This 177-nucleotide RNA was probed chemically with 2A3 and DMS. The reactions ran in a buffer of 150 mM KOAc, 10 mM MgCl2 and 150 mM bicine (pH 8.5), at 24 C. For 2A3, 2,501 sequencing reads were counted.

RNA sequence: GGGAACGACUCGAGUAGAGUCGAAAAUUAAAGGUGGUGGUGGAGGAGGUACGCCUCCAGCUGCUCAGCCGACGUACCGCACACACGCCUUUUCGGCAUAGAGCAGCAAUUGGGUAUCCAUAAAAAACAUUAACAGUCCGUUCGCGGACUGUUAAUGAAAAGAAACAACAACAACAAC
Reactivity to 2A3 in 0.01 (KOAc 150mM, MgCl2 10mM, bicine 150mM(pH8.5), 24C), signal-to-noise 2, nucleotides 027 to 126: u090u060a080a030a040g080g010u050g040g010u040g000g000u060g020g020a040g010g000a010g000g000u010a030c060g040c010c000u000c010c010a000g000c010u010g010c010u010c020a020g000c020c000g010a030c020g000u020a020c010c020g030c030a040c010a000c000a020c070g090c000c060u120u090u070u040c000g000g000c040a080u050a110g000a000g000c000a000g000c010a010a050u090u050g060g000g000u050a050u010c000c060a020u210a010a150a000a000a010a000
Reactivity to DMS in 0.01 (KOAc 150mM, MgCl2 10mM, bicine 150mM(pH8.5), 24C), signal-to-noise 3, nucleotides 027 to 126: u000u010a040a130a110g000g020u000g010g020u000g020g020u010g010g000a040g010g010a050g010g000u010a030c100g030c030c010u020c030c040a090g000c010u000g010c010u000c010a050g000c010c000g000a060c160g010u010a020c070c030g000c110a110c160a100c280a080c150g000c060c090u000u000u010u000c030g010g000c010a190u000a100g010a010g010c000a020g010c010a010a020u000u020g020g000g010u000a090u000c020c040a110u040a000a050a060a060a100a100